[RMDB]
This 177-nucleotide RNA was probed chemically with 2A3 and DMS.
The RNA was probed in 150 mM KOAc, 10 mM MgCl2 and 150 mM bicine (pH 8.5) at 24 C.
As a SHAPE reagent, 2A3 marks flexible, mostly unpaired nucleotides at the ribose 2'-OH.
RNA sequence: GGGAACGACUCGAGUAGAGUCGAAAAGAUAUGGACGAAGUAAGGCCGAAGAACCUAAGUAUGUCGGAAACGACAUACGAUGGGGAGGCUAUCUUCGUCCUAAGUCAAAGACACGUUCGCGUGUCAAUCAUGUAGCGAGGUUCGCCUCGCUACAUGAAAAAGAAACAACAACAACAAC
Reactivity to 2A3 in 0.01 (KOAc 150mM, MgCl2 10mM, bicine 150mM(pH8.5), 24C), signal-to-noise 2, nucleotides 027 to 126: g060a000u070a030u150g000g000a020c010g010a000a020g020u130a300a240g110g000c000c000g080a140a050g050a090a060c000c010u010a080a020g000u010a000u010g010u000c020g000g020a060a060a050c020g000a000c000a000u010a010c020g010a040u050g000g020g000g040a030g000g010c000u010a030u050c010u010u000c010g010u000c000c000u000a000a000g000u010c020a120a000a060g010a010c010a000c020g070u110u120c300g000c040g170u050g000u010c000a000a060
Reactivity to DMS in 0.01 (KOAc 150mM, MgCl2 10mM, bicine 150mM(pH8.5), 24C), signal-to-noise 2, nucleotides 027 to 126: g020a060u000a300u000g000g000a000c000g010a020a000g000u000a140a300g000g000c010c000g060a100a180g000a100a180c000c000u000a170a300g010u000a010u000g000u020c000g000g000a080a050a090c000g000a000c000a000u000a000c000g010a140u000g000g000g000g000a040g000g030c000u000a110u030c000u000u000c000g010u000c000c000u000a030a050g000u000c080a110a020a100g020a040c000a030c000g020u000u010c180g010c060g010u000g000u000c000a090a140